[RMDB]
RNA sequence: GGGAACGACUCGAGUAGAGUCGAAAAAAACAGUAGGGGGAAGUGAGAUUCCGUUGGCAACAGAAGGGAGCAGUAGGCGAUCACUUUCAACUGCUUCCGGAAUACCUGCAACAAAAACAAAGAAUCAAAGAGGAAAGAAAAUCCAGGCAACUAGACACAUAUUAGGAGGUUUCGACCUCCUAAUAUGAAAAGAAACAACAACAACAAC
Reactivity to DMS in 0.01 (KOAc 150mM, MgCl2 10mM, bicine 150mM(pH8.5), 24C), signal-to-noise 1, nucleotides 027 to 156: a020a010a070c050a080g030u030a040g010g050g020g010g000a040a090g030u010g070a130g000a160u000u010c070c070g010u000u000g050g040c010a090a070c030a070g030a190a110g030g030g010a030g040c000a070g010u020a090g000g010c070g060a150u000c050a050c070u010u000u000c060a100a100c010u000g000c020u000u000c000c010g020g020a160a080u000a130c050c040u000g010c040a110a200c040a020a060a070a030a060c050a030a020a030g000a110a020u000c050a040a070a130g030a100g000g000a140a060a130g000a110a040a000a080u000c030c010a050g020g000c030a040a040c020u000a060g010a110c130a160
Reactivity to 2A3 in 0.01 (KOAc 150mM, MgCl2 10mM, bicine 150mM(pH8.5), 24C), signal-to-noise 1, nucleotides 027 to 156: a000a000a000c070a060g060u110a110g000g030g000g040g000a000a000g000u010g040a080g010a010u050u020c020c050g050u040u050g100g010c020a030a020c020a030g030a040a070g030g000g010a010g040c000a010g020u060a060g210g040c020g030a060u130c050a050c170u070u150u040c050a020a000c000u000g000c000u000u000c000c000g000g040a040a030u060a090c020c020u100g050c050a050a030c030a060a030a090a020a000c030a030a090a020g040a070a020u090c060a030a010a030g100a010g020g040a030a050a050g070a020a090a020a010u190c050c150a000g020g020c030a030a060c040u040a030g040a040c040a010
Source information:
The record gives the reactivity of an RNA of 207 nucleotides to DMS and 2A3.